[RMDB]
RNA sequence: GGGAACGACUCGAGUAGAGUCGAAAAGAUAUGGAGUCUUCCGUGAAUGGAGAAGCAGGGAGUCGAUCGUCGGAAACGACGAAUUGACGAAGAACUGCUUCUCCAUUCACGGAGAGACUCCUAAGUCCAACAUAAUUAGCUUCGGCUAAUUAUGUUGAAAAGAAACAACAACAACAAC
Reactivity to DMS in 0.01 (KOAc 150mM, MgCl2 10mM, bicine 150mM(pH8.5), 24C), signal-to-noise 4, nucleotides 027 to 126: g000a110u000a300u000g010g000a030g000u000c000u000u000c000c000g010u000g000a020a010u000g010g010a020g010a020a000g010c000a010g010g010g010a100g020u000c000g020a010u000c000g020u000c010g010g000a130a120a230c010g010a010c000g010a030a050u000u000g010a010c010g000a090a120g000a160a240c010u010g010c000u000u000c000u000c000c000a000u000u000c000a000c000g010g000a000g010a010g000a000c000u000c010c000u000a010a060g010u000c050
Structure probing data (DMS) for a 177-nucleotide construct.
For DMS, 7,762 sequencing reads were counted.
DMS adducts were read by reverse transcription with MarathonRT.